[RMDB]
RNA sequence: GGGAACGACUCGAGUAGAGUCGAAAAUAAAUGAGCGUACAGCACACUCAGACUGUACGCUAUCUGAGUGUGUCAACUUCAAAGUCCAACGACACACACUAGGCGUUGGAACAAGAGUGUGAGAAAAUAGGAAUAAAUAGUUCGCUAUUUAUUCCUAAAAAGAAACAACAACAACAAC
Reactivity to DMS in 0.01 (KOAc 150mM, MgCl2 10mM, bicine 150mM(pH8.5), 24C), signal-to-noise 7, nucleotides 027 to 126: u010a060a120a080u010g010a050g010c040g010u000a030c060a160g010c030a040c020a040c020u000c010a070g010a080c050u000g020u000a040c120g010c030u000a030u010c030u010g000a050g010u000g010u000g000u000c080a070a070c100u000u000c100a050a110a140g000u000c020c020a020a040c030g010a070c030a070c080a060c120a080c150u010a060g010g010c040g020u000u000g000g000a040a050c090a070a160g000a030g010u000g000u000g000a110g000a070a030a060a100
Reactivity to 2A3 in 0.01 (KOAc 150mM, MgCl2 10mM, bicine 150mM(pH8.5), 24C), signal-to-noise 6, nucleotides 027 to 126: u200a010a080a090u150g050a030g040c030g020u060a020c030a020g010c010a010c000a020c030u010c000a010g040a120c020u070g030u130a040c100g010c040u010a010u010c010u020g030a020g010u010g000u010g040u060c030a050a030c020u120u110c040a050a080a010g030u010c010c000a020a000c020g070a030c010a020c020a000c010a040c180u060a060g070g060c010g020u000u010g030g020a030a020c020a060a030g050a020g030u070g010u050g040a060g070a030a100a010a060